Chemical mapping of a 177-nucleotide RNA with 2A3 and DMS. It was measured as part of the RMDB library OK1LIB. For DMS the reverse transcriptase was MarathonRT.
[RMDB]
RNA sequence: GGGAACGACUCGAGUAGAGUCGAAAAGAAACAUUCGAAAUAGGAGAAGCGAGGCGUAGAACGUUGUGUGUCCUGCCCAUGUGUUGACUACACGUCAUGUAGCACUGGGAUACAAAGAAUGGAAAAAGGGAAAACUAUCUUUCGAGAUAGUUUUCCCAAAAGAAACAACAACAACAAC
Reactivity to 2A3 in 0.01 (KOAc 150mM, MgCl2 10mM, bicine 150mM(pH8.5), 24C), signal-to-noise 3, nucleotides 027 to 126: g060a000a090a000c010a020u020u040c070g100a140a000a030u200a120g010g030a050g020a190a000g010c050g060a060g110g000c010g010u050a030g040a250a020c080g000u010u080g100u060g010u000g050u030c010c020u030g000c000c020c010a070u210g010u000g050u100u220g050a060c000u140a090c110a030c160g120u030c040a030u270g070u090a000g010c010a050c040u030g010g000g030a050u090a020c040a000a050a010g020a020a020u050g010g000a000a000a000a040a190
Reactivity to DMS in 0.01 (KOAc 150mM, MgCl2 10mM, bicine 150mM(pH8.5), 24C), signal-to-noise 3, nucleotides 027 to 126: g020a120a100a090c040a000u000u000c040g030a080a070a050u100a030g000g000a030g000a110a120g010c110g010a050g000g000c040g030u010a100g000a080a150c090g000u020u020g010u000g030u010g000u000c010c010u000g020c000c000c000a000u010g010u040g000u020u000g020a070c010u000a080c230a120c180g000u010c070a130u020g010u030a080g000c000a000c030u000g000g000g010a050u060a050c180a120a070a140g010a030a030u000g000g000a040a030a030a100a130